An RNA of 207 nucleotides, treated with DMS and 2A3 and read out base by base. 2A3 adducts were read by reverse transcription with SuperScript II with manganese. Conditions: 150 mM KOAc, 10 mM MgCl2 and 150 mM bicine (pH 8.5), 24 C. DMS adducts were read by reverse transcription with MarathonRT.

RNA sequence: GGGAACGACUCGAGUAGAGUCGAAAACAAUCAACAAUAUGGUUUGUGUAGUUAUGCUGAAAAUCGUUGAGGUUGUAUGGAAUAGGUUAACCGUAAGACCUUAAGUUUAAAAACUUUAAAAUUAAUCAAAAUCAUGUACACUUCGGUGUACAUGAAACCUUUGAACUAAGUUCGCUUAGUUCAAAGGAAAAGAAACAACAACAACAAC
Reactivity to DMS in 0.01 (KOAc 150mM, MgCl2 10mM, bicine 150mM(pH8.5), 24C), signal-to-noise 1, nucleotides 027 to 156: c000a020a100u010c070a070a060c100a140a140u000a100u000g000g000u040u000u010g000u000g040u000a090g000u000u000a080u000g000c010u010g000a040a050a070a080u000c030g000u000u000g020a200g020g030u000u000g000u020a060u000g000g000a060a160u000a070g010g030u000u010a070a300c070c120g000u010a070a220g010a020c010c000u000u000a010a030g000u010u000u000a080a080a130a040a070c040u020u010u000a040a020a020a250u000u010a100a100u000c020a040a040a090a180u020c000a010u010g000u000a000c000a010c010u010u000c300g040g030u000g010u010a000c000a000u000g000a010a030a070
Reactivity to 2A3 in 0.01 (KOAc 150mM, MgCl2 10mM, bicine 150mM(pH8.5), 24C), signal-to-noise 3, nucleotides 027 to 156: c030a010a090u110c030a010a040c020a040a110u070a040u140g040g050u070u050u070g050u020g020u030a110g040u100u090a060u160g040c050u120g060a040a050a020a150u070c060g000u020u040g010a020g010g030u000u000g010u010a120u080g060g030a100a110u050a070g020g000u050u090a050a050c010c020g020u030a030a060g020a000c010c000u010u030a030a020g000u010u040u110a060a110a040a030a010c010u070u130u150a030a080a100a120u100u200a100a020u080c040a010a090a060a100u000c000a000u000g000u000a000c010a000c000u030u050c160g050g030u000g000u000a000c000a000u000g010a000a000a000